[RMDB]
RNA sequence: GGGAACGACUCGAGUAGAGUCGAAAAGGAUUGUUCCGUAUAAUUUUGGUGCGAAAGCAUAGAGAGCCGCAGUGUUACUCUUCAUCACAGAUUUUGUGAACGGAGAGUGUCAAGCGGUUCCCACAUUAGUACUAUAGAGAUUCGUCUCUAUAGUACUAAAAGAAACAACAACAACAAC
Reactivity to 2A3 in 0.01 (KOAc 150mM, MgCl2 10mM, bicine 150mM(pH8.5), 24C), signal-to-noise 9, nucleotides 027 to 126: g080g050a120u100u160g030u100u020c020c010g050u100a130u060a170a210u090u130u120u180g080g000u020g000c020g060a130a040a020g000c030a020u100a050g120a000g010a000g030c000c010g000c030a060g080u010g020u120u030a000c000u000c000u000u000c000a020u010c000a010c010a080g160a300u100u230u270u100g020u010g010a060a070c090g000g000a000g000a000g000u010g010u010c010a030a030g000c000g000g000u000u000c010c000c000a090c000a010u010u020
Reactivity to DMS in 0.01 (KOAc 150mM, MgCl2 10mM, bicine 150mM(pH8.5), 24C), signal-to-noise 8, nucleotides 027 to 126: g010g000a100u010u010g000u010u000c030c030g020u020a080u020a070a130u010u010u010u020g010g020u000g000c000g000a120a080a180g010c010a020u000a130g000a080g000a040g020c010c010g020c000a140g010u000g010u020u000a010c000u000c000u000u000c000a100u000c000a000c000a040g000a230u010u010u010u000g020u000g010a020a070c180g020g000a000g000a010g010u000g000u000c020a110a080g010c000g000g010u000u000c000c010c030a130c190a090u000u000